Chemical mapping of a 207-nucleotide RNA with 2A3 and DMS. Values cover nucleotides 27 to 156.

[RMDB]
RNA sequence: GGGAACGACUCGAGUAGAGUCGAAAAAGUCUACUCUAUCCUAUGAUCAGGAUGAGCAUCCAACUCAAAAUACGCACUCAUCGGGGCCCUACGAGCAGUAGCCCAAACAAUCUCAUAUGAAGUAACACUAGCAAUCAUCCUACUAUCAGUACUCCUAACGAUAUGUUCUGUUCGCAGAACAUAUCGUAAAAGAAACAACAACAACAAC
Reactivity to 2A3 in 0.01 (KOAc 150mM, MgCl2 10mM, bicine 150mM(pH8.5), 24C), signal-to-noise 5, nucleotides 027 to 156: a000g100u020c020u010a020c000u000c020u040a100u060c000c010u060a080u210g090a120u120c110a020g000g030a000u020g010a020g020c020a060u050c040c030a040a060c030u040c130a070a120a050a010u110a090c060g000c020a020c020u030c020a080u060c050g030g000g000g030c010c040c030u040a030c040g030a030g050c070a020g020u050a030g040c000c010c000a010a060a010c020a020a050u060c040u030c090a050u100a070u200g100a080a020g030u100a070a000c020a010c090u040a040g020c040a020a050u040c000a040u040c020c020u030a050c020u040a060u100c030a030g030u020a060c010u030c010c020u020a050
Reactivity to DMS in 0.01 (KOAc 150mM, MgCl2 10mM, bicine 150mM(pH8.5), 24C), signal-to-noise 1, nucleotides 027 to 156: a090g010u010c030u000a030c030u000c010u010a100u030c020c000u000a120u010g060a180u000c120a090g000g000a060u000g010a060g000c020a080u000c090c050a040a070c060u000c090a140a060a110a110u020a100c050g000c060a020c030u000c060a070u000c050g000g000g000g000c000c050c000u010a080c020g000a080g000c050a060g050u000a080g000c020c030c000a090a080a080c080a060a060u000c030u000c040a120u000a080u010g010a080a030g010u010a050a080c060a050c040u000a070g040c040a050a100u010c060a100u000c030c010u010a070c030u000a060u000c050a050g050u000a040c050u010c000c010u000a110

For DMS, 1,801 sequencing reads were counted. The RNA was probed in 150 mM KOAc, 10 mM MgCl2 and 150 mM bicine (pH 8.5) at 24 C. For 2A3, 3,437 sequencing reads were counted.